[RMDB]
RNA sequence: GGGAACGACUCGAGUAGAGUCGAAAAUCCUUCGGAUGCCCAGGUCGGACCGCGAGGAGGUGGAGAUGCCAUGCCGACCCGAAGAGGAAAGAAGGACGCGAGACGGUAACCUGUGAGUGGAAACCCGCAUUGUUAGAAAGUUCGCUUUCUAACAAUGAAAAGAAACAACAACAACAAC
Reactivity to 2A3 in 0.01 (KOAc 150mM, MgCl2 10mM, bicine 150mM(pH8.5), 24C), signal-to-noise 1, nucleotides 027 to 126: u010c010c000u030u040c070g070g010a090u160g060c000c000c010a030g060g020u020c020g010g020a060c030c050g020c030g040a060g080g030a070g030g040u040g010g040a120g010a070u160g070c010c010a040u110g010c000c010g040a030c000c000c000g090a090a050g090a070g070g030a070a050a030g040a020a010g030g000a010c000g010c020g050a080g020a020c030g000g030u050a040a050c000c020u060g010u050g110a060g030u080g030g040a070a030a040c000c010c000g030
Reactivity to DMS in 0.01 (KOAc 150mM, MgCl2 10mM, bicine 150mM(pH8.5), 24C), signal-to-noise 5, nucleotides 027 to 126: u000c010c010u000u000c060g010g010a180u010g020c020c020c020a110g000g020u010c030g010g010a130c040c110g000c090g000a090g010g010a090g020g030u000g010g010a120g010a110u000g010c030c020a050u010g000c020c010g000a070c010c010c040g010a070a100g020a100g000g000a080a100a080g000a080a050g000g010a060c130g020c060g000a100g000a060c050g000g000u000a070a110c060c020u010g010u010g000a070g000u000g010g000a050a090a100c030c010c030g000
Source information:
An RNA of 177 nucleotides, treated with 2A3 and DMS and read out base by base. For DMS, 5,583 sequencing reads were counted. The reactions ran in a buffer of 150 mM KOAc, 10 mM MgCl2 and 150 mM bicine (pH 8.5), at 24 C. Source: RMDB library VIROID, as collected in RNAgym. High DMS reactivity at an A or C suggests that its Watson-Crick edge is free.